[RMDB]
RNA sequence: GGGAACGACUCGAGUAGAGUCGAAAAGAGGGCGGCAACGCCCGGGCCUCUGAGGUCCUGGAGCUGUCCUGCGGGCCCAGCGCUCAGAAGUGAUGAAUUGAUCAGAUAGAUGAGGCUGGGCUUAUCCGUUCAUAUAAUUCUUCGGAAUUAUAUGAACAAAAGAAACAACAACAACAAC
Reactivity to DMS in 0.01 (KOAc 150mM, MgCl2 10mM, bicine 150mM(pH8.5), 24C), signal-to-noise 3, nucleotides 027 to 126: g030a080g040g040g010c020g020g020c050a090a130c230g020c080c010c070g020g000g020c010c000u020c300u000g010a080g030g010u000c010c010u010g010g010a130g010c010u000g000u000c010c010u000g010c100g020g000g010c000c000c000a010g000c030g000c000u010c010a020g000a300a130g010u010g010a040u000g000a170a210u010u010g000a060u000c010a040g000a150u020a080g010a300u000g000a010g010g000c000u000g000g010g010c000u000u000a000u010c040c050
Reactivity to 2A3 in 0.01 (KOAc 150mM, MgCl2 10mM, bicine 150mM(pH8.5), 24C), signal-to-noise 1, nucleotides 027 to 126: g220a010g030g010g000c020g020g020c040a110a020c070g120c010c000c030g000g000g010c020c010u090c300u300g110a090g010g020u020c000c010u020g010g000a000g000c010u010g000u020c000c000u020g050c060g010g020g000c010c000c010a010g000c230g110c000u000c000a040g000a110a010g080u010g050a080u020g050a090a300u290u240g020a020u060c000a010g140a250u130a040g080a050u020g000a010g000g000c000u000g010g000g000c000u000u000a000u000c010c040